[RMDB]
RNA sequence: GGGAACGACUCGAGUAGAGUCGAAAACGCAUAAUCCUCUUCGGGUAAGUGAUAAGGCAAGCGCUAUAAUGAAAUUCCCUGAGCGGGAGGGAGAAUUGCGCCAAACUGGACAAGCAGUGGAGGUUGAGAACAGCGUACCGUUCGCGGUACGCUGUUCAAAAGAAACAACAACAACAAC
Reactivity to 2A3 in 0.01 (KOAc 150mM, MgCl2 10mM, bicine 150mM(pH8.5), 24C), signal-to-noise 1, nucleotides 027 to 126: c000g000c090a250u080a250a190u110c060c040u060c030u050u080c000g150g000g070u210a080a000g060u000g130a180u000a140a040g000g110c020a030a150g040c000g000c000u000a010u080a190a190u030g130a020a010a000u060u060c000c030c000u000g040a060g050c080g000g000g000a040g000g030g000a140g000a040a040u050u080g040c000g000c030c010a060a300a000c030u000g090g000a000c040a130a020g000c000a010g070u000g000g050a000g010g000u040u220g030a100
Source: RMDB library OK1LIB, as collected in RNAgym. Structure probing data (2A3) for a 177-nucleotide construct. 2A3 adducts were read by reverse transcription with SuperScript II with manganese. The RNA was probed in 150 mM KOAc, 10 mM MgCl2 and 150 mM bicine (pH 8.5) at 24 C. The 2A3 profile rests on 437 reads.